This 177-nucleotide RNA was probed chemically with DMS and 2A3.
Conditions: 150 mM KOAc, 10 mM MgCl2 and 150 mM bicine (pH 8.5), 24 C.

RNA sequence: GGGAACGACUCGAGUAGAGUCGAAAAGAGCUGCACGGACGGAUCCUUAGAAGUAUGAACGAGUACUGGAUCCUAGGAUCCUUCGAACGUCUGGGAUCCACACUUACUGCGUUCGUAAGAGUCAGUGCUUUCCAUACGUUUUCGAACGUAUGGAAAGAAAAGAAACAACAACAACAAC
Reactivity to DMS in 0.01 (KOAc 150mM, MgCl2 10mM, bicine 150mM(pH8.5), 24C), signal-to-noise 8, nucleotides 027 to 126: g000a130g010c100u010g010c020a030c030g010g010a050c050g020g000a080u000c030c020u000u000a100g010a120a120g000u010a020u010g000a030a040c030g020a060g010u010a040c270u000g000g000a020u000c010c020u000a030g010g000a030u010c070c110u010u010c200g000a080a130c280g010u000c020u000g000g000g010a020u000c000c010a030c230a070c180u000u000a020c020u000g020c010g020u000u000c010g010u000a030a080g010a120g000u000c020a050g010u010g000
Reactivity to 2A3 in 0.01 (KOAc 150mM, MgCl2 10mM, bicine 150mM(pH8.5), 24C), signal-to-noise 5, nucleotides 027 to 126: g040a030g050c070u060g000c030a000c030g010g040a010c030g030g030a060u040c030c020u120u140a070g050a240a030g110u070a040u130g030a040a010c040g000a010g020u030a040c050u030g000g010a000u000c000c010u010a020g020g020a050u090c040c000u130u130c090g060a130a040c060g030u030c000u010g000g010g000a000u000c020c000a020c000a000c000u090u090a010c010u080g280c020g020u000u040c010g000u030a040a020g030a020g070u040c040a020g020u020g050